[RMDB]
RNA sequence: GGGAACGACUCGAGUAGAGUCGAAAAGAUAUGGAUUGGUAGGACAUGACGAUGGUCGGAAACGACCAUCCGUCAACAGCCUACCCAAUCCUAAGUCAAAAGCCAAGGACGUUCGCGUCCUUGGCAAGGUUAUAGCUUCCUUCGGGAAGCUAUAACCAAAAGAAACAACAACAACAAC
Reactivity to 2A3 in 0.01 (KOAc 150mM, MgCl2 10mM, bicine 150mM(pH8.5), 24C), signal-to-noise 1, nucleotides 027 to 126: g000a010u010a000u050g030g000a020u000u030g000g030u000a010g000g010a050c260a300u300g010a010c050g000a000u010g000g020u000c000g000g020a000a000a000c000g000a000c000c000a010u010c040c020g030u000c020a030a030c110a040g000c030c010u000a010c020c000c020a010a010u000c000c000u000a000a010g000u020c020a100a110a000a060g010c000c000a000a010g050g000a000c040g030u100u160c300g050c010g150u000c020c000u000u000g010g000c000a030a010
Reactivity to DMS in 0.01 (KOAc 150mM, MgCl2 10mM, bicine 150mM(pH8.5), 24C), signal-to-noise 1, nucleotides 027 to 126: g000a040u000a030u010g000g000a000u000u000g000g000u000a000g000g000a040c100a180u000g000a000c000g000a020u000g000g000u000c020g010g000a020a000a020c020g010a020c000c000a000u000c080c070g040u000c010a110a210c260a120g000c000c000u000a010c180c060c130a010a000u000c000c000u000a010a130g000u010c000a070a120a100a130g000c000c000a010a000g000g000a030c000g020u000u020c270g000c000g030u000c000c020u000u010g010g000c000a000a010